[RMDB]
RNA sequence: GGGAACGACUCGAGUAGAGUCGAAAAUAUGGAGCGGAAGGACAGUAUCGGAUCUUUUCUGGCGGGUCCAAUGCGCAAAGCUCGUUGAUACAGACACUGGACAUCCUUUUGGGUGUGAAACACACUGGAGAUGUAUGAUCUUCGGAUCAUACAUCUCAAAAGAAACAACAACAACAAC
Reactivity to 2A3 in 0.01 (KOAc 150mM, MgCl2 10mM, bicine 150mM(pH8.5), 24C), signal-to-noise 2, nucleotides 027 to 126: u260a090u110g100g010a030g020c010g020g010a000a060g020g010a040c040a070g020u030a040u090c020g000g060a030u000c020u010u130u110u060c070u130g050g010c070g010g010g000u000c020c000a020a010u070g000c080g000c050a030a070a010g000c020u000c040g040u000u110g040a040u050a140c050a040g060a030c040a030c160u020g000g040a010c010a040u010c010c030u080u180u160u180g080g000g000u000g000u000g020a030a070a000c060a000c000a000c070u040g100
Reactivity to DMS in 0.01 (KOAc 150mM, MgCl2 10mM, bicine 150mM(pH8.5), 24C), signal-to-noise 4, nucleotides 027 to 126: u010a070u000g010g000a060g020c020g000g000a140a080g000g010a090c070a130g020u000a030u000c060g000g000a080u000c030u000u010u010u000c080u000g000g010c090g010g000g010u000c010c020a060a060u000g010c060g010c090a070a130a160g010c030u000c050g020u010u000g000a110u000a080c100a070g000a080c090a070c080u000g010g000a070c040a080u000c020c010u000u000u010u010g030g020g010u010g000u000g000a080a050a120c100a030c090a060c060u000g010
Chemical mapping of a 177-nucleotide RNA with 2A3 and DMS. The DMS profile rests on 4,048 reads. Values cover nucleotides 27 to 126.